RNA sequence: GGGAACGACUCGAGUAGAGUCGAAAACAAGGGUAGUUCGCUACCCUUGAAAUUCUAGUCGCUAGAAAACGAUCAAAACUUGCGACUAGAAAAACGAUCGAAAAACUCAAUUCUUCGGAAUUGAGAACAUGUUGAUAAUGUUCGCAUUAUCAACAUGAAAAGAAACAACAACAACAAC
Reactivity to 2A3 in 0.01 (KOAc 150mM, MgCl2 10mM, bicine 150mM(pH8.5), 24C), signal-to-noise 5, nucleotides 027 to 126: c000a000a000g010g010g000u010a000g020u010u050c110g020c090u000a000c000c000c000u000u000g000a000a000a000u010u020c000u000a000g000u000c000g000c020u040a010g060a090a210a060a080c140g100a200u200c080a050a070a030a180c010u010u020g000c000g000a000c000u000a010g010a010a000a000a000a000c030g040a060u180c080g040a060a020a060a100a140c000u000c000a000a010u010u010c000u040u050c170g110g010a000a000u000u010g000a000g000a000a010
Reactivity to DMS in 0.01 (KOAc 150mM, MgCl2 10mM, bicine 150mM(pH8.5), 24C), signal-to-noise 5, nucleotides 027 to 126: c010a010a000g010g000g010u010a000g020u010u010c180g040c010u000a010c000c000c000u000u000g000a040a080a090u010u000c000u010a000g010u000c000g020c010u000a030g010a080a070a180a120c130g000a120u010c130a110a080a080a120c040u000u000g010c000g000a020c000u000a000g000a000a000a030a100a090c150g000a040u010c080g000a060a070a100a110a180c000u000c000a010a010u000u000c000u000u010c190g020g000a010a010u000u000g010a010g000a050a110
The record gives the reactivity of an RNA of 177 nucleotides to 2A3 and DMS.
For 2A3, 9,262 sequencing reads were counted.
The reactions ran in a buffer of 150 mM KOAc, 10 mM MgCl2 and 150 mM bicine (pH 8.5), at 24 C.
Reactivities are given for positions 27 through 126.
DMS adducts were read by reverse transcription with MarathonRT.